Source information: Chemical mapping of a 177-nucleotide RNA with DMS. For DMS the reverse transcriptase was MarathonRT. Values are in units of 0.01, from 0 to 300, in steps of 10. The RNA was probed in 150 mM KOAc, 10 mM MgCl2 and 150 mM bicine (pH 8.5) at 24 C. Values cover nucleotides 27 to 126.
[RMDB]
RNA sequence: GGGAACGACUCGAGUAGAGUCGAAAAUAAUAAAGAGUGGAGGCGAUGUGUUCGGAAAGAAAAAAGUACAAGACCCAUUUUCUCAAAAACGAGUCGGUGACCAUUCCAGAGUCUCUACUUCUCAAGAACAGAGGAGGUAAUUCGUUACCUCCUCUGUAAAAGAAACAACAACAACAAC
Reactivity to DMS in 0.01 (KOAc 150mM, MgCl2 10mM, bicine 150mM(pH8.5), 24C), signal-to-noise 1, nucleotides 027 to 126: u000a070a140u010a100a090a110g000a010g010u010g010g020a100g010g040c010g000a130u000g010u010g000u000u040c080g010g010a110a030a100g010a020a030a100a110a140a100g000u010a050c090a030a150g010a070c030c020c020a090u000u000u020u000c070u030c100a040a050a050a050a090c030g020a000g010u000c000g010g000u010g000a160c010c010a160u000u000c020c000a080g010a240g010u000c010u010c020u000a020c050u000u000c030u000c080a070a140g010a180